Structure probing data (DMS and 2A3) for a 207-nucleotide construct. The reactions ran in a buffer of 150 mM KOAc, 10 mM MgCl2 and 150 mM bicine (pH 8.5), at 24 C. DMS adducts were read by reverse transcription with MarathonRT. For 2A3 the reverse transcriptase was SuperScript II with manganese.

[RMDB]
RNA sequence: GGGAACGACUCGAGUAGAGUCGAAAAACACCCAAACUGAAAACGGAAGGCAAUCCUUCCACGACGAUACUUACUUUCCUUUGAUCGUCGUUACUACUGGCAUAGCCACAAAGGAGAACAAACAUGAGCGCGGACACUGACUUCGGUCAGUGUCCAAUCAUAUUACUAUCUUCGGAUAGUAAUAUGAAAAAGAAACAACAACAACAAC
Reactivity to DMS in 0.01 (KOAc 150mM, MgCl2 10mM, bicine 150mM(pH8.5), 24C), signal-to-noise 3, nucleotides 027 to 156: a070c080a220c010c010c000a070a100a300c150u020g020a040a030a040a070c050g010g020a050a010g050g030c140a110a160u000c010c010u000u000c000c020a090c010g010a030c010g000a050u000a060c050u000u000a050c130u000u010u010c050c020u000u000u010g000a040u000c020g020u000c000g050u000u010a050c100u010a070c050u000g020g050c030a220u010a140g020c020c020a040c040a060a060a060g020g030a050g010a050a150c090a090a040a150c110a100u000g010a090g000c070g020c080g010g010a030c000a020c000u000g010a030c010u000u000c300g050g000u010c000a010g010u000g020u010c000c000a000a030
Reactivity to 2A3 in 0.01 (KOAc 150mM, MgCl2 10mM, bicine 150mM(pH8.5), 24C), signal-to-noise 8, nucleotides 027 to 156: a000c060a100c010c020c000a060a110a040c160u190g100a120a060a030a050c060g010g010a010a000g020g030c160a060a170u230c010c000u000u000c010c000a000c010g000a000c000g000a000u070a160c020u070u040a050c020u060u160u070c020c010u060u010u030g010a000u010c000g000u000c000g000u020u050a040c050u020a030c020u010g010g000c060a290u110a140g040c010c010a030c060a000a040a010g020g020a020g010a070a030c070a110a110a010c060a150u200g080a060g120c150g010c070g020g000a000c000a000c000u000g010a000c000u030u070c170g040g000u000c000a000g000u000g000u000c000c000a000a000